Source information:
An RNA of 207 nucleotides, treated with 2A3 and read out base by base. The reactions ran in a buffer of 150 mM KOAc, 10 mM MgCl2 and 150 mM bicine (pH 8.5), at 24 C.
RNA sequence: GGGAACGACUCGAGUAGAGUCGAAAACGGCUGAGACUCAAUCGGGCUAAGCUGCCACCGCCCUUGCCGGUUCAGGGGUGGCCGCCGACAACCAUGAGCCGGAUACGCACGUAGUUCUCUCCAGUACGGGCUUUUUCGGACGGGGGUUCAACUCCCCACCAACUAUUGACUUCGGUCAAUAGUUGGUAAAAGAAACAACAACAACAAC
Reactivity to 2A3 in 0.01 (KOAc 150mM, MgCl2 10mM, bicine 150mM(pH8.5), 24C), signal-to-noise 1, nucleotides 027 to 156: c060g070g020c040u080g070a000g030a200c020u010c060a020a100u070c040g040g000g000c010u040a020a010g000c000u000g000c000c000a010c000c040g130c000c000c000u020u040g020c020c010g000g020u000u060c020a010g010g000g000g000u000g000g010c000c000g020c000c000g030a030c010a040a060c040c050a050u120g030a000g010c000c000g000g000a010u070a020c060g000c000a020c060g020u030a060g040u170u000c030u000c010u020c020c030a070g050u040a010c020g020g000g030c020u120u090u020u080u130c030g080g010a030c030g040g050g000g000g000u030u100c010a060a030c010u040c020c010c000c020